[RMDB]
RNA sequence: GGGAACGACUCGAGUAGAGUCGAAAAUGGUGAUUUAGAAAUAGGAGACCUACCGCAGGAUGAUGAGGAAGCGUGGGCCGAGCUAAGUUACCACUAUCAAAGAAACACCUACUUCUUCAGACAUGUGAAUGCAGCCAAAAUUCGUUUUGGCUGCAUUAAAAGAAACAACAACAACAAC
Reactivity to DMS in 0.01 (KOAc 150mM, MgCl2 10mM, bicine 150mM(pH8.5), 24C), signal-to-noise 2, nucleotides 027 to 126: u010g000g010u000g000a010u000u000u000a040g000a090a120a110u010a090g020g000a210g010a060c030c000u000a020c110c040g030c050a130g000g030a140u010g000a190u000g010a080g040g010a150a040g000c090g010u000g000g010g010c010c000g040a070g010c000u010a020a030g000u000u000a030c030c020a080c190u000a120u000c110a080a060a080g000a050a050a050c080a080c050c030u000a090c110u000u000c040u000u000c080a040g020a050c130a130u000g000u000g010
The record gives the reactivity of an RNA of 177 nucleotides to DMS. The RNA was probed in 150 mM KOAc, 10 mM MgCl2 and 150 mM bicine (pH 8.5) at 24 C. For DMS, 1,023 sequencing reads were counted. Values cover nucleotides 27 to 126.